[RMDB]
RNA sequence: GGGAACGACUCGAGUAGAGUCGAAAAAGGAUUGGUUUAAUUCUACAUGACUGGACCAGUAUGUACCUGAAAGAAAAAUCAAGCUUGUUGGAAUAUCAUUUGACCAGAGAUCUAUCAUGCACAAAUGACGAAGUUCAUUAUUCGUAAUGAACUUCGUAAAAGAAACAACAACAACAAC
Reactivity to DMS in 0.01 (KOAc 150mM, MgCl2 10mM, bicine 150mM(pH8.5), 24C), signal-to-noise 4, nucleotides 027 to 126: a070g010g010a080u000u000g010g010u000u000u000a040a090u010u000c050u010a050c140a080u010g020a090c150u010g010g020a100c090c020a060g010u000a040u000g000u000a100c060c040u000g020a070a110a090g010a030a070a070a080a060u020c080a040a070g020c120u000u000g000u000u000g020g010a070a070u000a050u010c030a070u000u000u000g000a110c090c050a060g010a080g000a060u010c090u000a050u020c060a050u010g020c110a090c130a030a050a060u010g000
Reactivity to 2A3 in 0.01 (KOAc 150mM, MgCl2 10mM, bicine 150mM(pH8.5), 24C), signal-to-noise 2, nucleotides 027 to 126: a020g060g010a070u040u030g030g100u050u030u060a090a100u050u070c010u090a100c040a160u140g070a060c000u040g050g000a050c040c000a000g000u040a030u070g040u100a060c070c020u080g030a110a080a040g040a060a150a030a000a000u050c030a060a040g020c070u100u120g090u010u120g060g020a080a090u090a020u090c050a040u010u010u190g070a010c040c000a030g000a000g000a070u000c010u050a100u030c020a040u100g020c070a040c020a140a060a010u090g010
Source: RMDB library OK2TRN, as collected in RNAgym. Chemical mapping of a 177-nucleotide RNA with DMS and 2A3. For DMS the reverse transcriptase was MarathonRT.